[RMDB]
RNA sequence: GGGAACGACUCGAGUAGAGUCGAAAAUAUAGAGUUUUAACGGUAAUGGCAUCGGUGUCUUAUCACCAAUAUCCAAUACGUUGGUAUUUGUCGUCAACGGGAAGGGGUAGGUCACAUUAUUCCAGUACGAUAAUCCCAUAUUCGUAUGGGAUUAUCGAAAAGAAACAACAACAACAAC
Reactivity to 2A3 in 0.01 (KOAc 150mM, MgCl2 10mM, bicine 150mM(pH8.5), 24C), signal-to-noise 6, nucleotides 027 to 126: u280a020u060a020g130a060g070u080u090u070u140a080a030c050g010g020u060a090a050u060g050g000c030a040u060c080g040g010u010g020u000c060u080u100a080u120c020a060c100c010a010a030u080a060u060c010c010a030a040u080a090c070g010u010u020g020g000u060a160u080u160u150g210u130c060g010u010c020a020a030c010g040g010g020a050a020g020g010g000g010u030a020g000g050u050c030a000c000a100u060u220a050u100u000c000c020a030g050u060a040
Reactivity to DMS in 0.01 (KOAc 150mM, MgCl2 10mM, bicine 150mM(pH8.5), 24C), signal-to-noise 7, nucleotides 027 to 126: u010a150u010a080g010a120g020u000u010u000u000a050a120c080g020g000u010a030a050u000g000g010c190a050u010c130g020g020u000g000u010c190u010u000a050u010c040a040c020c000a070a080u000a070u010c030c020a060a100u000a090c070g010u000u000g000g010u000a090u000u000u010g010u000c130g010u000c040a050a050c060g010g000g020a090a100g000g000g000g010u000a030g010g010u000c040a050c060a050u000u000a100u010u000c010c030a080g010u010a090

Record summary
Chemical mapping of a 177-nucleotide RNA with 2A3 and DMS. As a SHAPE reagent, 2A3 marks flexible, mostly unpaired nucleotides at the ribose 2'-OH. For 2A3, 7,402 sequencing reads were counted. The DMS profile rests on 11,152 reads. The RNA was probed in 150 mM KOAc, 10 mM MgCl2 and 150 mM bicine (pH 8.5) at 24 C.